The record gives the reactivity of an RNA of 207 nucleotides to DMS and 2A3. The DMS profile rests on 2,169 reads. The reactions ran in a buffer of 150 mM KOAc, 10 mM MgCl2 and 150 mM bicine (pH 8.5), at 24 C. Source: RMDB library OK3TST, as collected in RNAgym.
[RMDB]
RNA sequence: GGGAACGACUCGAGUAGAGUCGAAAAAAGAGUCAAGGCCAGCCGGGCUGUGCCUGGCCCAUCAGGCCUAGGUGGAGCUGGUAGGGGAGAUGGGACACCAGCCCAUUGCACAGGGUGUAGGCGGGACUGCUCUAGACCCCAGGGCAUCACUCCUGCCAAUGAUAGUGAGGUUCGCCUCACUAUCAUUAAAAGAAACAACAACAACAAC
Reactivity to DMS in 0.01 (KOAc 150mM, MgCl2 10mM, bicine 150mM(pH8.5), 24C), signal-to-noise 1, nucleotides 027 to 156: a090a050g010a080g050u000c030a080a040g040g010c000c010a290g010c000c040g030g030g000c010u010g000u000g050c050c040u010g010g030c030c030c020a150u010c110a070g000g000c010c000u000a000g000g040u010g020g010a140g000c030u000g040g010u000a080g000g010g030g000a070g030a130u010g000g000g000a130c060a150c030c040a040g010c010c000c000a110u000u010g020c070a130c070a050g000g020g040u010g000u000a050g010g010c000g050g020g020a060c180u020g000c000u000c020u010a060g010a140c040c020c010c040a080g040g020g000c070a070u000c060a090c060u000c000c020u000g000c000c010
Reactivity to 2A3 in 0.01 (KOAc 150mM, MgCl2 10mM, bicine 150mM(pH8.5), 24C), signal-to-noise 2, nucleotides 027 to 156: a000a030g060a000g010u100c050a020a080g010g000c000c000a000g070c020c010g030g010g060c150u190g120u110g110c010c010u010g000g000c020c020c000a210u200c080a030g030g000c000c020u020a030g000g000u040g010g030a080g010c020u020g010g040u040a060g030g010g000g010a080g030a110u170g010g050g020a030c020a030c080c000a010g090c000c000c000a030u070u190g010c060a030c010a100g000g010g100u130g050u120a010g010g000c010g000g010g010a020c020u020g000c010u010c000u010a060g100a150c000c000c000c070a020g010g000g010c010a010u050c020a050c030u000c030c000u030g010c000c000